[RMDB]
RNA sequence: GGGAACGACUCGAGUAGAGUCGAAAAAGCUCGCAACACCAUCAAAUUGCCGGGACAUCCUGUUCACAUGCUGCUGGUACCUCCAGGCACAGGGAAACCUUGCACUGGAACCAUGGUGAAAGCCGUGGGUAUGGUAAAAAUCUGGCAGCUAGGGACGCUAUAGAGGAGUCUUCGGACUCCUCUAUAGAAAAGAAACAACAACAACAAC
Reactivity to DMS in 0.01 (KOAc 150mM, MgCl2 10mM, bicine 150mM(pH8.5), 24C), signal-to-noise 1, nucleotides 027 to 156: a160g020c010u000c070g030c030a040a050c030a140c070c020a130u000c120a040a080a140u000u010g020c000c030g020g060g010a110c080a120u020c010c030u010g020u020u010c020a090c070a110u000g000c000u000g000c000u010g020g020u000a040c030c010u010c000c010a040g010g010c020a030c140a040g070g020g010a190a110a240c010c010u000u010g030c010a150c000u020g010g020a070a020c010c030a010u000g020g030u010g040a150a070a250g020c000c000g040u000g000g010g000u000a010u010g020g010u020a070a090a030a030a060u010c040u000g000g000c000a030g020c000u000a030g000g010g000a000c050g000
Reactivity to 2A3 in 0.01 (KOAc 150mM, MgCl2 10mM, bicine 150mM(pH8.5), 24C), signal-to-noise 3, nucleotides 027 to 156: a010g010c010u020c000g020c000a020a050c020a070c160c020a170u130c070a070a100a110u060u050g110c180c060g000g000g020a060c010a080u030c010c000u030g030u050u030c070a070c020a120u140g000c000u000g000c000u000g000g010u000a000c000c010u010c000c000a000g020g000c000a040c150a030g000g000g010a000a010a090c020c000u010u010g010c130a200c290u000g000g000a010a010c000c000a000u010g000g010u030g040a090a020a000g010c000c000g010u010g010g020g010u190a300u170g020g000u020a030a010a010a000a070u020c000u000g020g010c000a000g010c000u000a000g000g000g010a000c020g000
Chemical mapping of a 207-nucleotide RNA with DMS and 2A3. It was measured as part of the RMDB library ARCHII. As a SHAPE reagent, 2A3 marks flexible, mostly unpaired nucleotides at the ribose 2'-OH. The 2A3 profile rests on 2,106 reads. 2A3 adducts were read by reverse transcription with SuperScript II with manganese.